Structure probing data (DMS and 2A3) for a 177-nucleotide construct. Source: RMDB library OK1LIB, as collected in RNAgym. Reactivities are rounded to 0.1 and cut off at 0 and 3.

[RMDB]
RNA sequence: GGGAACGACUCGAGUAGAGUCGAAAAGCAGCAGCAGCAGCAACAUGCAAUGGCAACAAUUCCUGCUGCCCAGUCGCAUUGUCCAAAAUGCUUGAGGUUGGGGCAACGCAGCAGCAGCAGCAUCAGCAUCGAUGAUAGUAUUCGUACUAUCAUCGAUAAAAGAAACAACAACAACAAC
Reactivity to DMS in 0.01 (KOAc 150mM, MgCl2 10mM, bicine 150mM(pH8.5), 24C), signal-to-noise 8, nucleotides 027 to 126: g010c050a060g020c040a070g010c040a070g010c040a040g000c110a110a070c160a100u020g010c070a120a080u070g010g010c040a060a070c160a050a120u020u020c130c010u000g000c010u000g000c000c040c090a090g000u020c070g010c020a070u010u000g000u020c040c050a040a050a050a050u020g000c100u020u020g010a040g010g010u010u000g000g010g000g000c020a020a030c080g020c020a050g000c020a070g000c040a040g010c030a060g000c110a100u020c080a050g010c130
Reactivity to 2A3 in 0.01 (KOAc 150mM, MgCl2 10mM, bicine 150mM(pH8.5), 24C), signal-to-noise 9, nucleotides 027 to 126: g030c040a000g000c020a010g000c000a000g000c000a010g020c020a020a070c010a080u100g020c020a050a170u090g100g000c030a060a020c020a080a080u130u070c010c000u010g010c000u010g000c000c010c010a050g050u080c020g000c030a020u000u040g040u050c020c010a080a070a030a120u190g080c030u090u160g120a100g050g080u090u130g020g010g000g010c000a010a020c020g000c020a020g000c010a000g000c000a010g000c000a000g010c000a050u090c040a020g080c010

For 2A3 the reverse transcriptase was SuperScript II with manganese. For 2A3, 33,576 sequencing reads were counted.